This 177-nucleotide RNA was probed chemically with 2A3 and DMS. For 2A3 the reverse transcriptase was SuperScript II with manganese.
RNA sequence: GGGAACGACUCGAGUAGAGUCGAAAAACCGGCUCAGAACUGGAGCGGACAAGGGGAAUCCGACUGUUUAAUUAAAACAAAGCAUUGUGAUGGCCGGAGACGGUGUUGACACAAUGUGAUUUCUGCCACCUAGAUUACCCUUCGGGGUAAUCUAGGUAAAAGAAACAACAACAACAAC
Reactivity to 2A3 in 0.01 (KOAc 150mM, MgCl2 10mM, bicine 150mM(pH8.5), 24C), signal-to-noise 3, nucleotides 027 to 126: a000c010c000g040g000c010u020c050a050g060a140a050c060u150g010g020a010g120c000g020g000a050c070a080a080g060g000g000g040a060a050u030c030c010g060a040c040u040g060u080u090u080a130a140u130u180a080a100a030a040c070a030a050a020g000c020a020u020u010g000u020g060a190u140g040g010c000c020g020g000a010g020a020c000g040g000u100g090u130u170g090a060c020a000c000a050a030u010g000u030g060a030u020u020u010c030u020g080c040c010
Reactivity to DMS in 0.01 (KOAc 150mM, MgCl2 10mM, bicine 150mM(pH8.5), 24C), signal-to-noise 3, nucleotides 027 to 126: a140c050c000g000g010c000u010c050a130g010a150a060c050u000g060g020a070g020c030g000g000a090c050a080a060g000g050g020g030a160a100u000c050c060g000a170c090u010g000u030u000u000a090a090u050u070a070a070a010a070c100a050a160a180g030c020a020u020u000g020u000g000a150u000g000g000c040c000g000g020a230g000a190c020g010g010u000g000u010u000g030a300c080a000c010a030a000u010g010u020g020a090u000u000u000c010u000g010c300c210
The RNA was probed in 150 mM KOAc, 10 mM MgCl2 and 150 mM bicine (pH 8.5) at 24 C. For DMS the reverse transcriptase was MarathonRT.